This 177-nucleotide RNA was probed chemically with DMS and 2A3.
Reactivities are rounded to 0.1 and cut off at 0 and 3.
Values cover nucleotides 27 to 126.
For DMS, 2,165 sequencing reads were counted.
The 2A3 profile rests on 1,329 reads.
It was measured as part of the RMDB library OK2TRN.
The RNA was probed in 150 mM KOAc, 10 mM MgCl2 and 150 mM bicine (pH 8.5) at 24 C.

RNA sequence: GGGAACGACUCGAGUAGAGUCGAAAACAAUGUAGCGGGGCUCAAGCGUACCGCCGAAGUCGUGUCAUUGCAGCAUGUAGGGCCAACGCCCGCUGUGAUGGGUAGGGGAGCGUCGUCUGCCGGGUGACAAGCGAUAUGCUUUCGAGCAUAUCGCUUGAAAAGAAACAACAACAACAAC
Reactivity to DMS in 0.01 (KOAc 150mM, MgCl2 10mM, bicine 150mM(pH8.5), 24C), signal-to-noise 2, nucleotides 027 to 126: c050a170a070u010g040u020a070g000c050g020g010g010g020c040u000c090a070a100g010c060g000u000a090c020c040g000c030c050g000a080a050g010u000c030g000u010g010u000c030a040u000u000g000c010a010g000c020a160u020g020u010a150g000g010g030c010c060a120a150c300g040c020c000c000g000c010u000g020u010g000a020u000g000g000g010u000a130g020g000g000g000a070g010c020g000u040c030g010u000c010u010g000c060c070g000g000g000u000g000a100
Reactivity to 2A3 in 0.01 (KOAc 150mM, MgCl2 10mM, bicine 150mM(pH8.5), 24C), signal-to-noise 1, nucleotides 027 to 126: c020a060a140u180g040u130a070g010c070g000g020g000g000c010u030c120a170a040g080c060g040u060a030c020c040g000c000c020g020a080a020g060u070c050g030u040g000u040c000a010u020u020g030c010a000g010c000a010u140g180u300a180g020g000g000c020c040a040a090c160g000c030c000c020g000c010u010g020u010g020a050u020g030g040g100u150a100g060g010g000g020a040g010c060g080u070c010g030u000c010u020g100c010c060g000g040g000u020g030a020